[RMDB]
RNA sequence: GGGAACGACUCGAGUAGAGUCGAAAAUUAUUUUAAUGUGUUCUUCAAUGCCAGGUUGCAAAGGCUAUGAAAGCACGAUGAUCUAGCUAGUCCUAUCCGAAUCCCUAAAUGCCUUUGUGCAUUUGGAACUUACCUAGACAUUCGUGUCUAGGUAAGUAAAAGAAACAACAACAACAAC
Reactivity to DMS in 0.01 (KOAc 150mM, MgCl2 10mM, bicine 150mM(pH8.5), 24C), signal-to-noise 7, nucleotides 027 to 126: u010u010a060u020u000u000u010a050a120u010g010u000g000u000u000c140u000u000c020a060a290u010g010c010c020a100g030g010u010u010g020c180a100a080a130g010g000c010u000a230u000g000a030a040a040g000c030a020c020g000a080u000g010a050u000c040u000a040g010c070u000a110g000u000c010c020u000a060u000c060c050g010a120a120u010c040c010c040u000a010a010a010u000g010c000c010u000u000u010g010u010g010c010a010u000u000u000g000g010a100
Reactivity to 2A3 in 0.01 (KOAc 150mM, MgCl2 10mM, bicine 150mM(pH8.5), 24C), signal-to-noise 5, nucleotides 027 to 126: u030u010a030u010u100u030u110a150a160u140g010u000g000u020u020c080u050u010c020a030a010u050g000c010c010a070g090g080u160u050g050c050a140a110a060g020g000c010u030a070u100g050a020a020a010g010c010a000c020g010a030u100g020a010u010c030u050a010g040c000u010a020g060u020c010c000u010a090u000c020c030g070a060a050u030c030c000c000u030a030a010a000u010g000c000c020u190u210u210g110u140g010c000a010u010u000u020g020g010a010